The record gives the reactivity of an RNA of 177 nucleotides to 2A3 and DMS. 2A3 adducts were read by reverse transcription with SuperScript II with manganese. 2A3 is a SHAPE reagent: it acylates the 2'-hydroxyl of flexible nucleotides of all four kinds. Values cover nucleotides 27 to 126. In probing experiments dimethyl sulfate is read out at A N1 and C N3, which are open when not base-paired. The reactions ran in a buffer of 150 mM KOAc, 10 mM MgCl2 and 150 mM bicine (pH 8.5), at 24 C.
[RMDB]
RNA sequence: GGGAACGACUCGAGUAGAGUCGAAAAAACACCUUCACAUUUACGGCUCAUAUGGGUGUUCUUCUGGUACUUUUACAAGAUGUCAUUAAAGUGUUAUACCAAAGCAACGCAACGCAUGACGAGGACGAUCCGAUCGUAUCUUCGGAUACGAUCGGAUAAAAGAAACAACAACAACAAC
Reactivity to 2A3 in 0.01 (KOAc 150mM, MgCl2 10mM, bicine 150mM(pH8.5), 24C), signal-to-noise 1, nucleotides 027 to 126: a000a000c100a050c010c000u190u120c080a030c010a140u090u160u200a070c030g010g000c020u000c030a070u060a100u180g040g050g000u000g000u020u020c000u040u000c010u040g090g000u000a070c030u050u080u040u080a030c020a090a060g030a150u220g090u010c020a040u070u130a050a010a030g040u020g050u110u020a010u010a030c030c040a020a020a020g030c020a080a050c020g000c020a000a000c030g050c100a060u060g040a030c060g060a060g020g000a020c090g040
Reactivity to DMS in 0.01 (KOAc 150mM, MgCl2 10mM, bicine 150mM(pH8.5), 24C), signal-to-noise 2, nucleotides 027 to 126: a080a060c050a100c020c010u000u010c070a060c160a120u000u010u000a170c090g010g000c050u010c110a040u020a050u010g020g010g020u000g000u000u000c030u000u010c040u000g000g030u000a070c110u000u000u000u000a050c130a080a110g010a100u000g000u000c110a040u000u000a050a070a080g000u000g030u000u000a060u010a120c070c040a010a040a100g000c120a020a040c060g000c110a060a080c170g000c100a000u010g030a080c030g010a130g040g010a100c190g000